[RMDB]
RNA sequence: GGGAACGACUCGAGUAGAGUCGAAAACUUUGGUGAGGCCCUAUCUAGUAUAGCAAUCCACCAAGCAGGUGAUUUCACACAAUUCAGGUUCUCAUAGAAAAUGCGCCCUGACUUGACAGGUAUGGUCCACUAAUUAGUGGUUCGCCACUAAUUAGUGAAAAGAAACAACAACAACAAC
Reactivity to DMS in 0.01 (KOAc 150mM, MgCl2 10mM, bicine 150mM(pH8.5), 24C), signal-to-noise 9, nucleotides 027 to 126: c060u000u010u000g010g010u000g010a060g000g030c260c300c000u010a020u000c020u050a120g020u030a040u020a040g000c080a070a280u010c060c010a010c010c010a030a040g020c130a080g000g020u000g000a110u010u000u000c040a090c060a120c060a040a150u010u010c030a030g010g010u000u020c010u000c010a060u030a100g010a050a060a050a070u000g000c100g000c300c010c010u000g000a040c060u010u000g010a080c060a050g000g010u010a030u010g010g000u010c060
Reactivity to 2A3 in 0.01 (KOAc 150mM, MgCl2 10mM, bicine 150mM(pH8.5), 24C), signal-to-noise 9, nucleotides 027 to 126: c030u070u040u070g040g010u050g030a080g040g030c010c020c000u000a020u010c040u040a060g110u130a070u030a060g030c040a030a050u020c050c020a010c010c010a030a020g100c070a040g020g070u040g040a110u020u130u110c060a060c000a000c010a060a060u060u040c010a020g020g010u120u070c030u000c020a050u090a080g220a060a120a030a020u070g010c030g030c010c000c000u020g020a040c020u040u050g020a030c020a040g000g060u080a070u100g040g010u020c020
An RNA of 177 nucleotides, treated with DMS and 2A3 and read out base by base. Reactivities are given for positions 27 through 126. For 2A3, 32,511 sequencing reads were counted. It was measured as part of the RMDB library OK1LIB.